[RMDB]
RNA sequence: GGGAACGACUCGAGUAGAGUCGAAAAUCUGUUCUAUAGGCUCGUACCUCUGUUUCCUUGAUUUCUCAAGAGACAGGCCCUUAACCCUGGUUGAUGAACCAUGACCGUGCGGCUAGAGCGUGAUUGAUCUUCCAAAUUUGUUCGCAAAUUUGGAAGAAAAAGAAACAACAACAACAAC
Reactivity to 2A3 in 0.01 (KOAc 150mM, MgCl2 10mM, bicine 150mM(pH8.5), 24C), signal-to-noise 1, nucleotides 027 to 126: u000c010u040g050u020u000c040u020a190u040a160g030g020c060u030c250g040u070a040c000c070u040c010u010g000u010u010u070c090c000u000u000g060a060u040u300u090c130u010c050a010a000g010a000g000a000c000a000g040g020c000c000c030u100u200a080a050c020c020c060u010g050g030u000u040g090a300u180g080a070a030c030c010a060u060g050a040c000c150g000u020g020c040g020g000c030u010a000g010a010g000c040g130u030g020a030u060u030g020a010
Reactivity to DMS in 0.01 (KOAc 150mM, MgCl2 10mM, bicine 150mM(pH8.5), 24C), signal-to-noise 1, nucleotides 027 to 126: u000c030u000g010u010u010c030u000a060u010a160g010g000c030u000c200g000u000a140c040c110u000c020u020g000u000u000u000c210c080u000u000g000a080u000u010u000c160u010c000a020a010g020a080g010a000c000a020g000g000c010c010c050u000u000a090a150c090c040c000u000g000g000u000u010g000a180u000g030a020a040c030c030a040u010g000a140c110c110g000u000g030c120g010g000c010u000a020g010a030g020c030g030u000g000a050u000u010g010a190
An RNA of 177 nucleotides, treated with 2A3 and DMS and read out base by base. 2A3 is a SHAPE reagent: it acylates the 2'-hydroxyl of flexible nucleotides of all four kinds. For 2A3, 902 sequencing reads were counted. It was measured as part of the RMDB library RFMREP. The DMS profile rests on 1,148 reads. For DMS the reverse transcriptase was MarathonRT.